[RMDB]
RNA sequence: GGGAACGACUCGAGUAGAGUCGAAAACACAAUUCUCUAAGCGAUGAGAAGCGUGUGGAAAAUUAGGGAAGGGCUACGGCUAUAAUCCUAAGAAAGCUUAUCUACAAGCGGACGUAUUCUCAGAACGAAAACCAUUUGGCGUUCGCGCCAAAUGGAAUAAAAAAACGAAGUUCGCUUCGUUUUUUUAAAAAGAAACAACAACAACAAC
Reactivity to 2A3 in 0.01 (KOAc 150mM, MgCl2 10mM, bicine 150mM(pH8.5), 24C), signal-to-noise 2, nucleotides 027 to 156: c100a000c020a030a040u050u010c010u000c020u070a160a030g100c050g080a110u040g000a020g000a010a000g010c010g000u070g010u120g060g000a100a120a010a030u030u020a020g000g010g050a040a040g110g010g000c010u030a010c130g060g000c010u010a030u080a140a070u060c000c000u020a030a020g040a010a050a000g000c000u030u040a040u100c070u110a060c030a150a020g020c010g000g010a000c000g010u020a300u140u010c020u010c010a020g020a100a050c040g060a020a090a070a060c000c000a000u000u000u000g010g000c030g000u050u050c180g010c000g000c040c000a010a000a000u000g000g000a000a000
Reactivity to DMS in 0.01 (KOAc 150mM, MgCl2 10mM, bicine 150mM(pH8.5), 24C), signal-to-noise 2, nucleotides 027 to 156: c070a050c020a030a110u000u000c010u000c010u000a180a210g030c050g000a300u010g000a020g020a040a050g010c160g020u000g020u000g030g000a130a070a130a190u000u000a030g010g010g030a150a160g010g020g000c010u010a050c220g070g020c000u000a050u000a080a100u010c010c000u010a030a050g010a070a110a110g020c040u000u010a120u000c060u000a110c060a080a120g020c060g000g020a060c020g010u000a090u000u000c020u000c010a090g000a190a070c060g000a120a080a110a210c020c020a010u000u000u000g000g020c000g000u000u010c300g020c010g030c030c000a000a000a000u010g010g010a000a020
The data come from the RNA Mapping Database (RMDB), library M2RFPK. An RNA of 207 nucleotides, treated with 2A3 and DMS and read out base by base. 2A3 adducts were read by reverse transcription with SuperScript II with manganese. The RNA was probed in 150 mM KOAc, 10 mM MgCl2 and 150 mM bicine (pH 8.5) at 24 C. DMS adducts were read by reverse transcription with MarathonRT.